[RMDB]
RNA sequence: GGGAACGACUCGAGUAGAGUCGAAAAGACUGGUUCACUUCGUCGGUAGAGCAGAGUGAGCCUCUCGGUGAUGGGAACUGGACGUCGUCCACUUUACUGUGGAUUGUAAAUUGGUACGUUCGGACAAGAUAUUCUGGAAUUUCGAUUCUAGGAUAUCAAAAGAAACAACAACAACAAC
Reactivity to 2A3 in 0.01 (KOAc 150mM, MgCl2 10mM, bicine 150mM(pH8.5), 24C), signal-to-noise 9, nucleotides 027 to 126: g030a020c130u130g000g000u010u000c000a000c010u060u060c040g130u030c040g050g210u200a060g020a030g050c070a020g030a030g070u060g010a010g010c000c000u000c000u000c010g060g030u110g040a100u110g020g030g040a040a050c010u010g010g010a000c020g010u030c020g040u000c010c010a000c010u100u130u130a140c160u070g040u080g130g050a080u070u060g060u070a080a130a120u070u080g060g020u100a020c010g000u010u010c000g000g010a020c020a060a070
Reactivity to DMS in 0.01 (KOAc 150mM, MgCl2 10mM, bicine 150mM(pH8.5), 24C), signal-to-noise 9, nucleotides 027 to 126: g000a050c130u010g000g010u000u000c000a010c000u000u010c060g020u000c030g010g020u030a090g010a130g010c040a120g010a040g010u010g000a020g000c000c000u000c040u000c010g000g010u010g010a100u000g000g000g010a090a100c040u000g000g010a020c000g010u000c080g010u000c000c000a000c020u000u010u040a100c120u010g010u010g010g000a050u010u010g030u020a030a060a140u020u020g010g010u030a030c020g010u000u000c000g000g010a130c190a090a100
Structure probing data (2A3 and DMS) for a 177-nucleotide construct.
Conditions: 150 mM KOAc, 10 mM MgCl2 and 150 mM bicine (pH 8.5), 24 C.